[RMDB]
RNA sequence: GGGAACGACUCGAGUAGAGUCGAAAAUUGAUCAGGCGGGUUUGAGGGUUCUCAGGAUGAACAUAAAAAAACUGGCUCAUGGUUAUUCCUCUUCAUCGAGUCUCUCGACUCUAUUGCUUGGGGAUAAAUACUAGUGCGUAUUCGUACGCACUAGUAUAAAAGAAACAACAACAACAAC
Reactivity to DMS in 0.01 (KOAc 150mM, MgCl2 10mM, bicine 150mM(pH8.5), 24C), signal-to-noise 2, nucleotides 027 to 126: u010u020g010a070u000c030a070g000g000c050g010g010g000u000u010u010g020a140g000g000g010u010u000c020u000c110a100g020g010a070u000g010a040a070c130a070u040a000a010a130a070a060a060a060c070u000g010g010c050u010c070a080u000g000g010u000u000a090u010u000c000c010u000c050u010u010c020a060u000c150g000a050g000u000c010u000c120u000c070g020a050c010u000c010u020a060u000u010g020c090u000u000g030g010g020g010a060u000a050a100
Reactivity to 2A3 in 0.01 (KOAc 150mM, MgCl2 10mM, bicine 150mM(pH8.5), 24C), signal-to-noise 2, nucleotides 027 to 126: u060u070g020a000u010c010a030g040g020c060g000g010g060u000u080u150g060a040g040g080g020u150u090c020u010c020a080g180g050a040u150g010a060a000c050a080u160a020a200a000a030a000a020a020c030u010g110g000c030u020c040a050u040g080g000u000u050a050u090u070c000c040u000c010u030u020c020a070u010c020g020a010g000u000c020u030c000u000c030g020a030c000u010c010u080a140u010u140g030c080u040u020g010g020g020g000a000u040a150a170